[RMDB]
Record summary
Structure probing data (DMS and 2A3) for a 177-nucleotide construct. DMS (dimethyl sulfate) methylates the pairing face of unpaired adenines and cytosines. For 2A3, 1,214 sequencing reads were counted. The data come from the RNA Mapping Database (RMDB), library M2PK50.

RNA sequence: GGGAACGACUCGAGUAGAGUCGAAAAGGUGCGAUGUUCGCAUCGCACCAAAGAAGCUCAAAAUGAGGCAAACAACGGCGUCAGCGUGAGCAAACGCGGAAAAAACCACUUGGUUCGCCAAGUGGAACAUCCAAUUGCACUUCGGUGCAAUUGGAUGAAAAGAAACAACAACAACAAC
Reactivity to DMS in 0.01 (KOAc 150mM, MgCl2 10mM, bicine 150mM(pH8.5), 24C), signal-to-noise 1, nucleotides 027 to 126: g000g050u000g020c000g000a000u000g000u000u020c220g060c000a020u000c000g010c020a000c000c000a020a090a030g010a160a130g020c040u020c040a020a060a080a130u000g050a070g020g000c000a060a040a110c140a040a050c080g000g000c010g000u000c060a140g000c130g010u020g000a060g000c050a090a050a110c080g000c070g010g010a000a050a070a090a060a090c010c000a000c000u000u000g000g010u000u040c160g000c000c000a010a000g010u000g000g010a030a030
Reactivity to 2A3 in 0.01 (KOAc 150mM, MgCl2 10mM, bicine 150mM(pH8.5), 24C), signal-to-noise 1, nucleotides 027 to 126: g010g010u000g010c000g000a010u020g030u040u110c070g000c100a000u020c010g030c000a000c000c030a010a000a000g000a000a000g010c040u010c030a010a010a060a210u100g020a030g010g000c040a040a170a000c030a040a210c110g090g000c030g170u020c020a040g030c030g090u050g030a050g000c040a050a020a070c080g030c070g070g000a090a090a000a000a030a080c010c000a000c010u010u020g000g010u030u030c060g000c040c030a010a020g000u000g010g000a000a000